[RMDB]
The record gives the reactivity of an RNA of 177 nucleotides to 2A3. Reactivities are rounded to 0.1 and cut off at 0 and 3.

RNA sequence: GGGAACGACUCGAGUAGAGUCGAAAACUGAACAAUGCAAAUCCGCGCACUCUUCAACCUUCGGGUCCAAGGUUCAUCCGAAGCGUCAGACUUCGAGUUAAUCCGCUGAGAACCUUCUCCACCACUCGACCCGUGCGCAUUUCGAUGCGCACGGGUCAAAAGAAACAACAACAACAAC
Reactivity to 2A3 in 0.01 (KOAc 150mM, MgCl2 10mM, bicine 150mM(pH8.5), 24C), signal-to-noise 1, nucleotides 027 to 126: c030u030g010a020a010c040a110a070u110g030c000a020a060a140u020c060c060g000c040g000c030a020c020u070c000u120u000c050a040a140c000c000u010u010c000g000g000g090u010c040c040a000a180g000g090u060u020c030a030u060c050c120g000a000a000g030c020g300u090c040a000g020a100c000u000u000c100g070a100g000u020u010a050a010u000c060c010g100c000u070g040a070g020a160a020c000c000u000u000c040u000c000c030a120c050c080a090c100u090c040
Overview: The reactions ran in a buffer of 150 mM KOAc, 10 mM MgCl2 and 150 mM bicine (pH 8.5), at 24 C. Values cover nucleotides 27 to 126.